[RMDB]
RNA sequence: GGGAACGACUCGAGUAGAGUCGAAAACAGGCAUCAGAGGCCCUUGCACAGGCAAAGCACGUGGUGGAGAAAGGCCUGGAACAUGCGGUCUGGUGGCAUGAGCCCUCCUGGCACGGCCGUGGGCAACCCGUUAAUAUCAUUUCGAUGAUAUUAACGGAAAAGAAACAACAACAACAAC
Reactivity to 2A3 in 0.01 (KOAc 150mM, MgCl2 10mM, bicine 150mM(pH8.5), 24C), signal-to-noise 9, nucleotides 027 to 126: c010a010g070g010c010a030u020c030a070g060a070g210g050c010c000c010u020u060g010c060a050c020a070g050g000c030a100a100a050g090c020a030c130g210u200g050g140u070g030g110a120g090a070a110a030g120g000c000c010u020g000g010a020a030c030a020u090g020c050g010g020u010c010u040g070g000u020g050g010c050a080u090g030a020g020c010c000c000u040c020c050u060g030g000c050a040c130g120g000c020c010g020u060g000g000g020c020a030a040c000
Reactivity to DMS in 0.01 (KOAc 150mM, MgCl2 10mM, bicine 150mM(pH8.5), 24C), signal-to-noise 9, nucleotides 027 to 126: c090a070g000g010c020a050u010c060a070g010a170g010g010c030c010c030u000u000g020c080a230c070a060g010g000c050a070a080a120g020c060a070c060g020u000g020g020u000g010g010a130g000a090a110a100g000g010c010c010u000g000g010a090a140c070a040u000g010c080g010g010u000c020u000g010g020u000g010g000c020a070u000g000a130g010c030c020c030u000c040c040u010g000g000c050a100c150g000g000c020c040g010u000g000g000g010c060a080a070c160
Chemical mapping of a 177-nucleotide RNA with 2A3 and DMS. The RNA was probed in 150 mM KOAc, 10 mM MgCl2 and 150 mM bicine (pH 8.5) at 24 C. Values cover nucleotides 27 to 126. Source: RMDB library OK2TRN, as collected in RNAgym. For DMS, 22,332 sequencing reads were counted.